An RNA of 177 nucleotides, treated with 2A3 and DMS and read out base by base. 2A3 adducts were read by reverse transcription with SuperScript II with manganese. The data come from the RNA Mapping Database (RMDB), libraries RFM100 and RFMREP. Conditions: 150 mM KOAc, 10 mM MgCl2 and 150 mM bicine (pH 8.5), 24 C. Reactivities are given for positions 27 through 126.

[RMDB]
RNA sequence: GGGAACGACUCGAGUAGAGUCGAAAAGAAAGCAGGGCAGGUUUUUUUCUCAGCUACAUCGGUGUAAAUCCAGAGCAACUCCACUGAGAUUCACACCAGAGUAACUGAGAGCAGAAUCUGGCCAAAAGCCUGUAUAGGUAUUCGUACCUAUACAGGCAAAAGAAACAACAACAACAAC
Reactivity to 2A3 in 0.01 (KOAc 150mM, MgCl2 10mM, bicine 150mM(pH8.5), 24C), signal-to-noise 8, nucleotides 027 to 126: g080a040a080a010g110c120a130g000g020g010c020a010g010g050u010u000u000u000u000u030u000c000u000c000a000g000c000u000a000c010a230u040c020g000g000u000g000u010a020a010a000u000c000c000a000g010a030g060c100a120a130c080u100c110c050a060c030u040g040a100g000a300u010u010c020a010c000a000c010c030a040g010a000g020u000a010a000c000u000g000a000g000a000g000c000a000g000a000a000u000c000u010g030g040c000c000a030a030a010a020
Reactivity to DMS in 0.01 (KOAc 150mM, MgCl2 10mM, bicine 150mM(pH8.5), 24C), signal-to-noise 3, nucleotides 027 to 126: g000a150a090a140g010c160a070g030g000g000c030a000g000g000u000u000u010u000u000u020u000c010u000c020a000g000c050u010a010c010a100u020c090g000g000u020g020u000a060a010a000u000c000c000a020g010a110g010c190a110a100c210u020c170c100a120c000u000g010a110g000a030u010u000c050a020c020a000c000c000a110g010a120g000u000a010a020c010u010g000a010g020a010g020c160a000g000a010a000u000c000u010g000g010c000c040a030a070a140a140